[RMDB]
RNA sequence: GGGAACGACUCGAGUAGAGUCGAAAAUAUUCGCUACUUUAAUCCUCAUUAUUACCCAUUGGGGUAGGUUCUAUUAUUGUUCUUAUUUUACAGACAAGAAAAUUGAGCCACAAAAAGGUUAAGUAACUUGCCCAACAAGAGUCUGUAUUCAAAUUCCGAGUUACAGCUAAUUCGUUAGCUGUAACUCAAAAGAAACAACAACAACAAC
Reactivity to 2A3 in 0.01 (KOAc 150mM, MgCl2 10mM, bicine 150mM(pH8.5), 24C), signal-to-noise 1, nucleotides 027 to 156: u080a060u030u170c080g010c110u000a010c000u100u070u220a140a060u120c000c000u000c020a020u000u260a010u020u020a010c000c000c020a080u050u300g110g000g000g000u000a010g020g010u000u000c000u000a010u090u000a010u080u050g060u100u040c000u140u050a300u080u100u000u000a050c060a010g010a000c000a050a050g010a110a220a030a020u000u000g000a000g000c000c000a040c110a010a100a060a020a000g000g010u000u000a010a010g000u010a000a190c000u020u020g000c000c000c020a000a050c060a060a000g300a020g070u070c070u110g020u090a150u070u210c020a000a000a270u130u000c080c040